[RMDB]
Description: An RNA of 177 nucleotides, treated with 2A3 and DMS and read out base by base. Reactivities are given for positions 27 through 126. For DMS, 24,704 sequencing reads were counted.

RNA sequence: GGGAACGACUCGAGUAGAGUCGAAAAGGACCGAACCCGUGUUUGUGGCAAUAAACUGGGAUGAGAUGUGGAUAGGAGUGAAAGGCUUAUCAAGUUUGGGGUUAGCUGGUUCUCCACGAAAAGUGUGGUUAUACUUCGUUUUCGAACGAAGUAUAACAAAAGAAACAACAACAACAAC
Reactivity to 2A3 in 0.01 (KOAc 150mM, MgCl2 10mM, bicine 150mM(pH8.5), 24C), signal-to-noise 6, nucleotides 027 to 126: g030g020a000c010c030g030a040a030c030c010c020g040u030g070u050u070u050g060u030g050g030c060a050a040u080a150a080a030c030u030g000g080g040a030u080g060a060g030a050u100g020u050g090g030a050u040a120g040g030a030g010u080g040a110a040a020g040g000c000u050u040a050u110c040a070a070g050u060u090u100g060g010g000g010u040u040a020g030c020u010g040g010u030u010c030u010c020c010a030c020g060a070a110a030a060g110u160g040u080g140
Reactivity to DMS in 0.01 (KOAc 150mM, MgCl2 10mM, bicine 150mM(pH8.5), 24C), signal-to-noise 9, nucleotides 027 to 126: g010g000a090c040c020g010a100a100c020c010c020g020u010g010u000u000u010g020u000g000g000c150a080a070u000a030a060a070c050u010g000g010g010a090u000g010a100g010a070u010g010u000g000g010a090u000a050g000g010a090g010u010g010a070a090a120g000g000c030u000u010a050u000c060a090a080g000u000u000u000g010g010g010g010u000u000a080g030c060u000g010g010u000u000c020u000c020c020a050c060g000a060a060a070a100g010u010g020u010g010